The record gives the reactivity of an RNA of 177 nucleotides to 2A3 and DMS. Reactivities are rounded to 0.1 and cut off at 0 and 3. For 2A3, 1,134 sequencing reads were counted. The data come from the RNA Mapping Database (RMDB), library RFMREP.
RNA sequence: GGGAACGACUCGAGUAGAGUCGAAAACCUCAUGUGAUUACAAUUUGUAAGUUUGCCAGAGUAAGGUGUAGCUUCUUAUCCAUAUGAUUAGAUUCCUAACAUGAUAAUCAUUUUGACGAAGUCUACGGUUAGAUAGUCACUUCGGUGACUAUCUAACAAAAGAAACAACAACAACAAC
Reactivity to 2A3 in 0.01 (KOAc 150mM, MgCl2 10mM, bicine 150mM(pH8.5), 24C), signal-to-noise 2, nucleotides 027 to 126: c010c020u090c010a100u100g060u050g100a110u030u080a070c030a090a230u070u170u200g020u050a090a200g070u060u210u090g000c020c020a030g060a030g170u090a110a030g040g060u080g000u030a000g010c000u000u000c010u040u130a040u000c010c010a020u050a010u060g010a000u010u020a020g040a080u040u030c020c010u130a070a120c060a090u060g030a050u030a060a000u000c040a050u050u140u070u040g040a030c050g030a000a010g020u000c020u000a000c020g000
Reactivity to DMS in 0.01 (KOAc 150mM, MgCl2 10mM, bicine 150mM(pH8.5), 24C), signal-to-noise 2, nucleotides 027 to 126: c010c010u010c130a090u020g000u010g000a100u010u000a000c090a140a130u010u010u000g020u010a010a020g000u000u000u000g010c030c090a120g010a130g030u000a080a100g020g020u010g000u000a040g000c020u000u010c020u000u010a150u010c110c060a040u000a000u000g000a070u000u000a030g010a210u000u000c140c060u000a040a110c250a050u000g000a150u000a010a010u000c010a030u000u000u010u000g030a130c300g010a010a060g000u010c030u000a020c060g010